The record gives the reactivity of an RNA of 207 nucleotides to DMS and 2A3. Conditions: 150 mM KOAc, 10 mM MgCl2 and 150 mM bicine (pH 8.5), 24 C. The data come from the RNA Mapping Database (RMDB), library OK3TST. Reactivities are given for positions 27 through 156.
[RMDB]
RNA sequence: GGGAACGACUCGAGUAGAGUCGAAAAGAGUUCACGAACGAGAGUGAACGUGAGUACACGAGAGAGUACACACACUCGUGUACUCGAACUCGAACACGUGUGAGUGAACUCGUUCUCGUUCGUGUGUUCGAUCGAGUACACGAGUUCGAUCGAACACAACUACCAAUGUAUUCGUACAUUGGUAGUUAAAAGAAACAACAACAACAAC
Reactivity to DMS in 0.01 (KOAc 150mM, MgCl2 10mM, bicine 150mM(pH8.5), 24C), signal-to-noise 6, nucleotides 027 to 156: g020a080g020u000u000c000a020c010g040a160a120c030g010a160g010a150g020u000g000a060a160c060g020u000g010a080g030u000a040c030a070c020g010a050g020a210g010a190g000u000a150c140a110c110a130c100a160c060u000c040g020u000g000u000a020c010u000c000g010a030a060c070u000c020g010a080a210c050a050c040g020u010g010u010g010a270g010u000g000a040a030c020u000c010g000u010u000c000u000c010g000u000u010c030g000u000g010u000g020u000u000c020g010a020u000c000g000a040g020u000a130c120a160c270g000a150g010u000u000c010g010a020u000c010g000a050a030c010a020c020
Reactivity to 2A3 in 0.01 (KOAc 150mM, MgCl2 10mM, bicine 150mM(pH8.5), 24C), signal-to-noise 9, nucleotides 027 to 156: g020a000g000u010u010c000a000c010g010a030a000c020g020a060g020a020g180u050g050a090a010c020g010u030g000a000g000u010a000c010a000c020g000a010g000a010g000a020g200u300a070c120a010c020a000c010a020c140u010c010g000u000g000u010a000c000u000c000g000a030a010c020u010c030g050a080a010c030a010c070g090u120g020u050g070a020g010u010g020a020a010c000u000c000g000u010u000c000u000c010g020u070u050c040g000u010g000u000g000u050u000c000g000a000u000c000g000a000g050u140a120c140a090c230g070a110g020u030u000c000g000a000u000c000g000a000a000c010a000c000